Chemical mapping of a 177-nucleotide RNA with 2A3. The 2A3 profile rests on 1,276 reads. The RNA was probed in 150 mM KOAc, 10 mM MgCl2 and 150 mM bicine (pH 8.5) at 24 C. The data come from the RNA Mapping Database (RMDB), library RFM100. Values cover nucleotides 27 to 126.

RNA sequence: GGGAACGACUCGAGUAGAGUCGAAAAGAUGGAUCUUUUGGAAUCUGACUGGGACUACUUCUGGGCAACCGGAGGCGGACUCGGACGGAAUCUGAUCGUAACGUCUUUGGCAGGAUUGCUUUACCGCAGCGACCCAAAAUUUCGAUUUUGGGUCGCUAAAAGAAACAACAACAACAAC
Reactivity to 2A3 in 0.01 (KOAc 150mM, MgCl2 10mM, bicine 150mM(pH8.5), 24C), signal-to-noise 2, nucleotides 027 to 126: g020a000u050g000g020a160u300c010u040u030u030u020g020g010a020a030u010c000u000g080a080c000u000g000g000g030a030c010u010a010c000u000u010c000u010g000g000g000c040a080a120c000c010g020g000a000g010g020c020g000g000a020c010u000c000g000g000a000c020g000g030a020a050u000c020u020g000a010u040c010g010u020a020a050c010g040u000c000u000u030u030g020g000c010a040g030g300a300u200u100g020c010u020u050u090a100c010c020g000c040